An RNA of 207 nucleotides, treated with DMS and 2A3 and read out base by base. Source: RMDB library OK3TST, as collected in RNAgym. The 2A3 profile rests on 1,836 reads.
RNA sequence: GGGAACGACUCGAGUAGAGUCGAAAAAGAAGAGGCUGUCUGGGAAGUGAGAGGAUUUGUUCAGAAGUUCAGGGAUCCCCUCCCGUCGCUUAUUAGCUCAUGGAUCCAACUUGUAGCCCACAGCAUAAGUCGUGGAUGUAGAGGUGUCUUGGAUCUGCACCUAUUACAACUUCGGUUGUAAUAGGUGAAAAGAAACAACAACAACAAC
Reactivity to DMS in 0.01 (KOAc 150mM, MgCl2 10mM, bicine 150mM(pH8.5), 24C), signal-to-noise 2, nucleotides 027 to 156: a090g020a120a060g010a090g020g030c020u010g020u000c020u010g050g000g030a060a120g030u000g000a090g000a070g030g010a120u000u000u000g040u000u000c000a110g010a080a110g010u010u000c060a090g000g000g010a080u000c010c000c020c030u000c010c020c020g030u010c060g030c050u010u000a060u010u000a070g010c040u020c040a120u000g020g010a070u000c000c010a050a030c040u000u020g030u010a220g040c050c020c040a050c050a090g000c020a120u010a050a100g000u000c040g030u010g000g010a050u000g000u000a140g010a050g030g030u000g000u000c070u000u010g010g000a090u000c040u000g010
Reactivity to 2A3 in 0.01 (KOAc 150mM, MgCl2 10mM, bicine 150mM(pH8.5), 24C), signal-to-noise 4, nucleotides 027 to 156: a000g100a030a010g020a010g040g030c070u020g030u080c040u060g040g010g020a050a050g030u060g060a080g000a010g030g010a040u050u070u130g060u070u070c050a040g030a140a010g030u080u120c070a020g060g010g040a070u050c000c020c030c020u030c020c000c020g080u060c060g000c060u110u120a070u100u170a140g020c020u000c110a050u150g030g020a010u030c050c000a010a020c030u080u070g110u110a050g030c010c030c000a020c010a000g030c010a030u060a200a040g090u110c040g060u060g020g000a060u030g020u060a030g010a020g000g050u050g020u060c060u030u030g040g010a040u070c090u110g000